RNA sequence: GGGAACGACUCGAGUAGAGUCGAAAAUCUUAUAUGUUCGCAUAUAAGAAAAGGCGGAGUAGUGUUGGGUCGCGAAAGGCCAUAAAUUAACAAUCUCUCAGAUACAGACCUGGUUCGCCAGGUCUAACUACUCCUUCUUGUUCGCAAGAAGGAGUAGAAAAGAAACAACAACAACAAC
Reactivity to 2A3 in 0.01 (KOAc 150mM, MgCl2 10mM, bicine 150mM(pH8.5), 24C), signal-to-noise 2, nucleotides 027 to 126: u000c000u000u010a010u010a010u010g020u000u050c110g080c100a010u010a000u000a020a010g040a010a200a030a010g070g000c070g030g000a020g020u110a020g000u090g080u070u290g150g040g090u080c010g030c030g060a100a000a000g070g000c000c000a060u110a020a160a020u080u110a040a000c000a040a060u030c060u000c010u020c050a040g050a160u080a150c120a020g000a010c000c000u020g000g040u070u040c080g010c070c010a000g030g020u000c000u010a000a000
Reactivity to DMS in 0.01 (KOAc 150mM, MgCl2 10mM, bicine 150mM(pH8.5), 24C), signal-to-noise 2, nucleotides 027 to 126: u000c000u000u000a010u010a000u000g000u000u010c200g030c020a010u000a010u000a000a020g000a030a110a070a090g010g010c030g000g010a070g010u000a110g010u010g010u000u000g030g010g020u010c030g010c040g010a090a070a150g010g000c000c010a050u000a060a070a090u030u000a040a060c080a040a080u000c050u000c030u000c070a120g000a150u010a100c190a030g020a000c000c000u000g000g000u000u020c230g000c010c000a000g010g010u010c000u000a000a080